Structure probing data (2A3 and DMS) for a 207-nucleotide construct. DMS adducts were read by reverse transcription with MarathonRT.
[RMDB]
RNA sequence: GGGAACGACUCGAGUAGAGUCGAAAAGUAUAUAUCCGCACAAACGUCGAAAACCCUGUACUGUCAUUGACGGCCUCGGUAACUCUUCGUGACCAAAAUAGCCUAAGCAAGACACACCGAAAAGGCCUUAGCCUCGACGCCAUAUCAAUACGCAGUGUCUACUACACCUGUUCGCAGGUGUAGUAGAAAAAGAAACAACAACAACAAC
Reactivity to 2A3 in 0.01 (KOAc 150mM, MgCl2 10mM, bicine 150mM(pH8.5), 24C), signal-to-noise 4, nucleotides 027 to 156: g030u010a020u000a020u010a050u180c050c040g090c060a050c020a110a160a020c050g060u060c040g090a050a080a110a140c020c010c000u010g030u110a060c030u050g060u100c020a100u060u130g050a050c040g010g020c010c010u010c010g000g010u040a070a060c030u000c000u080u050c070g060u020g090a080c040c090a040a030a030a190u080a090g020c030c040u060a080a010g020c030a020a000g020a000c000a000c000a040c060c030g070a100a070a010a040g010g000c000c000u020u060a030g020c010c020u040c030g030a040c040g010c010c010a040u070a040u130c050a050a060u150a100c100g000c120a020g050u120g030
Reactivity to DMS in 0.01 (KOAc 150mM, MgCl2 10mM, bicine 150mM(pH8.5), 24C), signal-to-noise 2, nucleotides 027 to 156: g000u010a050u000a150u010a060u030c030c010g020c100a130c080a110a070a070c050g000u000c000g010a070a170a090a170c010c000c010u020g040u030a030c030u000g020u010c020a170u010u010g000a070c040g050g050c030c050u000c030g080g000u010a040a120c060u010c030u010u000c010g010u000g040a140c020c030a040a040a080a190u000a060g000c040c020u000a060a210g070c120a050a060g040a040c070a180c060a070c000c030g020a060a080a050a080g000g020c020c070u000u010a150g000c060c050u000c050g020a080c060g030c030c000a130u020a130u000c010a050a070u000a060c070g000c020a120g000u000g000